Annotation: Conditions: 150 mM KOAc, 10 mM MgCl2 and 150 mM bicine (pH 8.5), 24 C. The record gives the reactivity of an RNA of 177 nucleotides to 2A3 and DMS. Values cover nucleotides 27 to 126. The DMS profile rests on 9,043 reads.
RNA sequence: GGGAACGACUCGAGUAGAGUCGAAAAUGUUUAUUUACAUGAUGGCAUAAAGAGUUAACGGCUCAUAUGGUGCUCAUUACGUUCAAGUGUUGAAGGAUCCAAUAGCCUUGAACUGUGGUGCCAUGUGGAAUCGAUACAGAUUCGUCUGUAUCGAUUCAAAAGAAACAACAACAACAAC
Reactivity to 2A3 in 0.01 (KOAc 150mM, MgCl2 10mM, bicine 150mM(pH8.5), 24C), signal-to-noise 6, nucleotides 027 to 126: u040g020u000u200u060a240u050u150u160a070c060a030u130g030a020u070g080g000c030a020u080a080a240a020g070a020g040u050u070a090a020c040g050g000c000u010c030a010u020a030u060g000g000u010g030c040u070c120a030u070u150a030c080g000u000u010c020a020a020g020u010g070u270u070g060a140a080g100g060a090u090c050c020a040a070u060a060g030c010c010u000u000g000a000a010c040u040g030u030g010g000u010g000c000c000a000u010g020u010g050
Reactivity to DMS in 0.01 (KOAc 150mM, MgCl2 10mM, bicine 150mM(pH8.5), 24C), signal-to-noise 6, nucleotides 027 to 126: u000g010u010u000u010a060u020u000u010a110c070a060u000g010a110u010g000g010c020a050u010a080a100a150g010a070g010u000u000a070a110c150g010g010c060u000c040a020u000a020u000g010g020u000g010c010u010c050a070u000u020a050c210g010u000u000c040a020a020g000u000g000u000u000g010a120a170g010g010a100u010c100c050a030a090u010a080g000c080c010u000u000g000a010a010c010u000g020u000g010g000u000g010c030c000a000u000g010u000g010